Source: RMDB library RNAMAK, as collected in RNAgym. An RNA of 207 nucleotides, treated with 2A3 and read out base by base. The 2A3 profile rests on 847 reads. The RNA was probed in 150 mM KOAc, 10 mM MgCl2 and 150 mM bicine (pH 8.5) at 24 C.

RNA sequence: GGGAACGACUCGAGUAGAGUCGAAAACACGGAAGUUCGCUUCCGUGAAAAAGCGUACUACACUAUACAUAGAUGAUCAACAGCUCUUCCCAAAUAGGAAGAGACAUGAUCCCUAUGUAACUAGUGUAUCGCAAAAAGGACCCGUUCGCGGGUCCAAGGAAAUAUUAAGCUUCGGCUUAAUAUUUCCAAAAGAAACAACAACAACAAC
Reactivity to 2A3 in 0.01 (KOAc 150mM, MgCl2 10mM, bicine 150mM(pH8.5), 24C), signal-to-noise 1, nucleotides 027 to 156: c000a000c010g000g030a010a010g020u090u160c190g090c100u010u000c000c000g070u020g020a050a000a000a000a000g050c070g020u130a150c060u000a000c060a000c000u020a020u030a070c030a000u000a000g070a110u110g020a000u060c000a000a090c060a180g030c000u000c000u020u030c010c030c030a200a300a180u240a100g020g000a000a000g010a000g110a110c000a060u030g000a000u010c020c000c000u000a010u050g010u010a090a000c060u000a000g000u040g000u000a020u120c010g000c000a130a090a000a000a040g000g000a010c040c000c020g000u070u000c170g030c030g170g000g020u000c010c000a000a000